[RMDB]
RNA sequence: GGGAACGACUCGAGUAGAGUCGAAAAGAUAUGGACUAGGACUGUCUGGAGGUGACAGGCAACAGCUAUAGGUCGGAAACGACCUGAUAGACAUGCCUGCACCUCCAGACAGUCCUAGUCCUAAGUCGAUCUUCUUCUUGUUCGCAAGAAGAAGAUCAAAAGAAACAACAACAACAAC
Reactivity to DMS in 0.01 (KOAc 150mM, MgCl2 10mM, bicine 150mM(pH8.5), 24C), signal-to-noise 1, nucleotides 027 to 126: g000a080u000a300u000g000g000a010c000u010a000g000g000a040c000u020g000u000c000u020g030g020a000g000g020u000g010a170c010a010g010g020c010a030a080c300a180g020c010u000a000u000a020g010g010u010c010g010g010a110a140a230c000g010a000c020c000u010g000a010u000a000g010a060c130a160u000g010c020c000u000g000c020a010c020c000u000c000c000a000g000a000c020a010g000u000c000c000u000a000g010u000c000c000u000a010a040g010u010c110
Conditions: 150 mM KOAc, 10 mM MgCl2 and 150 mM bicine (pH 8.5), 24 C. The record gives the reactivity of an RNA of 177 nucleotides to DMS. For DMS the reverse transcriptase was MarathonRT. The data come from the RNA Mapping Database (RMDB), library TTRINS.